[RMDB]
RNA sequence: GGGAACGACUCGAGUAGAGUCGAAAACUGCCCAACGGUCUGAACUUGUGGCCUUAACCAAGGCACUGACUUUGGGAAAAGACAAGAGACUAAACGUGUAUACCGAUAGCAGAUAUGCUUUUGCUACCAACACGAUAGACUUCGGUCUAUCGUGUUGAAAAGAAACAACAACAACAAC
Reactivity to DMS in 0.01 (KOAc 150mM, MgCl2 10mM, bicine 150mM(pH8.5), 24C), signal-to-noise 3, nucleotides 027 to 126: c180u100g020c000c010c020a090a100c160g020g050u020c000u000g030a100a280c070u010u000g000u030g020g000c110c050u000u010a060a160c070c040a010a010g000g000c010a140c160u020g030a150c030u000u000u000g020g000g000a080a080a080a110g020a050c010a040a010g000a060g000a080c030u010a020a070a090c160g010u000g030u030a010u010a160c110c050g010a120u020a020g020c000a060g000a060u030a060u050g000c160u000u000u000u000g000c090u000a070c200
Reactivity to 2A3 in 0.01 (KOAc 150mM, MgCl2 10mM, bicine 150mM(pH8.5), 24C), signal-to-noise 7, nucleotides 027 to 126: c040u200g040c020c000c000a020a010c090g000g020u000c020u070g070a100a140c030u120u050g020u050g100g090c000c000u020u020a050a040c020c020a000a000g030g000c060a200c300u160g090a170c000u020u000u010g030g000g000a030a270a000a020g060a010c040a040a000g040a000g040a030c030u130a070a120a030c080g060u070g070u150a090u070a150c070c090g110a140u040a040g000c020a010g070a120u060a060u290g150c100u040u040u080u050g030c010u020a060c020